The record gives the reactivity of an RNA of 177 nucleotides to 2A3 and DMS. For 2A3 the reverse transcriptase was SuperScript II with manganese. For DMS the reverse transcriptase was MarathonRT. The DMS profile rests on 1,891 reads. The data come from the RNA Mapping Database (RMDB), library TTRDEL. The reactions ran in a buffer of 150 mM KOAc, 10 mM MgCl2 and 150 mM bicine (pH 8.5), at 24 C.
[RMDB]
RNA sequence: GGGAACGACUCGAGUAGAGUCGAAAAGAUAUGGAACCGCGUAGACAUGAACCGUCGGAAACGACAGGUUCAACAGCUACCGGUUCCUAAGUCAAAAGAAGACUAGUAGUUCGCUACUAGUCUUCAAGGAUGGAAAUAACUUCGGUUAUUUCCAUCCAAAAGAAACAACAACAACAAC
Reactivity to 2A3 in 0.01 (KOAc 150mM, MgCl2 10mM, bicine 150mM(pH8.5), 24C), signal-to-noise 2, nucleotides 027 to 126: g000a000u040a000u040g000g020a000a000c000c020g020c150g030u010a020g050a280c150a300u070g000a000a010c000c000g010u010c010g000g000a040a020a000c030g030a000c160a140g000g020u000u000c000a010a000c060a010g020c000u010a000c000c010g020g000u000u000c000c000u000a000a000g010u000c000a010a000a000a250g010a000a010g000a000c000u000a000g000u000a000g000u020u110c300g000c190u000a000c010u000a000g000u000c000u000u000c000a000a000
Reactivity to DMS in 0.01 (KOAc 150mM, MgCl2 10mM, bicine 150mM(pH8.5), 24C), signal-to-noise 2, nucleotides 027 to 126: g000a000u000a200u010g000g000a020a000c000c000g020c290g020u000a010g000a140c130a200u000g010a020a020c000c010g000u000c000g000g010a050a020a070c000g010a000c000a100g050g000u000u000c000a030a060c300a080g000c000u000a000c000c000g010g000u000u000c000c000u000a000a030g000u000c000a080a090a100a120g000a000a000g000a000c000u010a000g010u000a000g000u000u010c260g000c010u000a000c000u000a010g000u000c000u000u000c000a050a070